[RMDB]
RNA sequence: GGGAACGACUCGAGUAGAGUCGAAAAUUCUUUGCUGAAGAGGCUGCCGCUCUCGUCUGAAGGAACCAGCCUGGCUCAGCGUGCUGCUGUGCAGCGGCCAGGCUUCAUCUCUAACAGCAGCGAACGGACAUGAGGGAGCGCAAACCCUCGUCCCAAACUCAUGUGUGCAGUUCGCUGCACACAUGAGAAAAGAAACAACAACAACAAC
Reactivity to 2A3 in 0.01 (KOAc 150mM, MgCl2 10mM, bicine 150mM(pH8.5), 24C), signal-to-noise 2, nucleotides 027 to 156: u040u010c010u060u020u090g070c070u090g090a140a070g010a020g060g030c070u080g050c080c040g030c030u060c010u050c090g120u030c060u030g050a130a030g030g000a010a110c040c030a000g000c050c010u000g000g020c000u020c060a020g020c040g050u180g000c000u000g020c000u030g010u010g090c030a020g000c000g000g000c000c000a000g000g010c000u030u060c020a030u010c010u000c020u020a030a000c000a000g000c020a020g000c020g000a010a020c050g000g000a000c010a060u220g050a030g010g030g000a040g070c100g000c150a060a060a280c020c010c000u020c000g010u010c010c010c010a020a050a050
About this RNA
The record gives the reactivity of an RNA of 207 nucleotides to 2A3. For 2A3, 1,360 sequencing reads were counted.